[RMDB]
Chemical mapping of a 177-nucleotide RNA with DMS and 2A3. For 2A3 the reverse transcriptase was SuperScript II with manganese. For DMS the reverse transcriptase was MarathonRT. Source: RMDB library OK2TST, as collected in RNAgym. The reactions ran in a buffer of 150 mM KOAc, 10 mM MgCl2 and 150 mM bicine (pH 8.5), at 24 C. The DMS profile rests on 10,681 reads. Values cover nucleotides 27 to 126.
RNA sequence: GGGAACGACUCGAGUAGAGUCGAAAAGGACCUCGAAAAUGGUUGCGUGGACCGCGGUUUCGGUGGCUCCACCCAACCCCGCGAACCGUGCGCUCGGCGCUUGCACCUGCAGGCGGCGGGCCAGGUCGCGUACUAUGCGUUUCGACGCAUAGUACGCAAAAGAAACAACAACAACAAC
Reactivity to DMS in 0.01 (KOAc 150mM, MgCl2 10mM, bicine 150mM(pH8.5), 24C), signal-to-noise 8, nucleotides 027 to 126: g020g010a140c040c010u010c090g010a050a070a110a100u010g010g000u000u010g020c300g010u000g000g000a040c020c010g030c030g010g000u000u000u010c070g040g020u000g000g010c190u000c010c010a030c010c050c050a020a060c020c010c150c110g010c060g010a060a070c020c010g010u000g020c170g010c000u000c010g010g000c000g000c010u000u000g010c010a230c280c280u010g020c000a010g000g000c000g000g000c010g000g000g010c010c020a020g010g010u000c080
Reactivity to 2A3 in 0.01 (KOAc 150mM, MgCl2 10mM, bicine 150mM(pH8.5), 24C), signal-to-noise 6, nucleotides 027 to 126: g050g030a100c030c020u060c090g070a040a060a040a110u200g020g000u020u020g020c000g000u020g010g000a010c010c010g000c060g110g060u070u210u300c090g130g020u040g040g010c180u010c010c010a010c000c020c000a010a020c000c000c010c030g070c030g060a040a040c010c010g130u080g030c150g020c030u000c010g110g080c000g040c000u010u010g030c090a210c160c200u300g000c000a010g000g010c000g050g090c000g000g000g010c000c000a000g010g000u030c040